RNA sequence: GGGAACGACUCGAGUAGAGUCGAAAAAGGGGCUGAGCCCGCGGGGGGAGGGAACAGCGUUGAUCACGUGACGUGGUUUCAGUGUUUACACCCGCAGCGGGCCGGGGGUUCGGCCUCAGUCAGGCGCGCUCUACUGACCUUUCGAGGUCAGUAGAGCAAAAGAAACAACAACAACAAC
Reactivity to 2A3 in 0.01 (KOAc 150mM, MgCl2 10mM, bicine 150mM(pH8.5), 24C), signal-to-noise 1, nucleotides 027 to 126: a010g000g010g000g010c010u020g000a000g010c000c000c000g090c060g090g030g010g000g010g000a150g080g000g000a040a000c020a050g040c050g000u030u040g020a040u020c020a020c060g130u260g250a060c050g060u020g100g000u040u020u070c030a060g030u000g010u040u020u020a110c080a070c010c020c020g040c000a000g020c000g000g000g070c000c000g000g000g000g000g000u000u000c010g000g000c000c000u000c000a000g080u070c020a010g030g030c030g000c010
The record gives the reactivity of an RNA of 177 nucleotides to 2A3.
For 2A3, 1,106 sequencing reads were counted.
The RNA was probed in 150 mM KOAc, 10 mM MgCl2 and 150 mM bicine (pH 8.5) at 24 C.